An RNA of 207 nucleotides, treated with 2A3 and read out base by base. The RNA was probed in 150 mM KOAc, 10 mM MgCl2 and 150 mM bicine (pH 8.5) at 24 C. The 2A3 profile rests on 519 reads. For 2A3 the reverse transcriptase was SuperScript II with manganese.
RNA sequence: GGGAACGACUCGAGUAGAGUCGAAAAAAAAAUAAGCUCUUUGGGCACAGGCACCUGUCAUGUCUAUUUUAUCUUUAUGUCUCAGGAAACAUUCAGUCCAGAGUAGAACGUAUAGUAAAUUUUCACUGUCAGUUGAAUAAUCAGCACCUACAGAUUACUCCGAUUUAAAUUUCGAUUUAAAUCGGAGAAAAGAAACAACAACAACAAC
Reactivity to 2A3 in 0.01 (KOAc 150mM, MgCl2 10mM, bicine 150mM(pH8.5), 24C), signal-to-noise 1, nucleotides 027 to 156: a000a000a000a000a000u080a000a040g010c040u020c030u060u040u040g000g000g000c020a010c010a060g030g000c030a010c020c000u000g060u130c050a090u020g090u010c060u010a060u060u150u110u070a010u150c010u040u140u000a030u040g050u020c030u000c040a030g040g010a040a040a020c040a010u130u190c040a040g000u000c020c020a010g000a010g060u110a040g020a060a030c020g040u100a040u040a100g040u020a000a070a140u030u020u060u130c070a010c010u060g000u140c000a030g000u030u030g010a040a000u100a050a040u010c060a010g020c000a000c030c010u070a030c000a030g130a080u300u300a020